The record gives the reactivity of an RNA of 177 nucleotides to 2A3 and DMS. The DMS profile rests on 3,074 reads. Reactivities are rounded to 0.1 and cut off at 0 and 3. The reactions ran in a buffer of 150 mM KOAc, 10 mM MgCl2 and 150 mM bicine (pH 8.5), at 24 C. DMS adducts were read by reverse transcription with MarathonRT.
RNA sequence: GGGAACGACUCGAGUAGAGUCGAAAAAGGAUGGGAGGUAAAGCAAUGCAUGAUACAUGAGCCGUUGCCUCAGUAUCCACAACUUACCUCUGUGAAUACAAUCAUGCAUGGCUUAACAAAGGGGAUAUGAUUAGUGGGCUUUCGAGCCCACUAAUCAAAAAGAAACAACAACAACAAC
Reactivity to 2A3 in 0.01 (KOAc 150mM, MgCl2 10mM, bicine 150mM(pH8.5), 24C), signal-to-noise 3, nucleotides 027 to 126: a000g100g020a120u060g000g010g020a140g030g020u070a030a000a020g000c000a010a030u000g010c000a000u000g000a000u030a060c120a080u090g010a000g000c030c060g280u110u200g050c040c000u030c010a000g000u000a000u010c010c010a020c000a020a040c050u300u300a180c000c080u020c080u060g010u000g000a000a000u010a000c000a020a060u000c000a000u000g010c000a000u020g050g000c010u050u060a080a020c110a130a060a000g000g000g000g100a000u070a040
Reactivity to DMS in 0.01 (KOAc 150mM, MgCl2 10mM, bicine 150mM(pH8.5), 24C), signal-to-noise 3, nucleotides 027 to 126: a030g000g000a130u020g010g020g000a110g010g010u020a070a010a010g010c000a070a000u000g000c000a020u000g000a000u000a130c300a300u010g010a020g000c040c260g030u030u080g000c140c010u000c020a070g000u000a010u000c020c000a000c010a010a090c090u020u110a080c230c110u020c160u060g010u000g000a090a000u020a000c000a140a060u000c000a010u000g020c020a000u000g010g010c000u000u010a050a110c140a060a000a090g030g000g020g010a070u020a120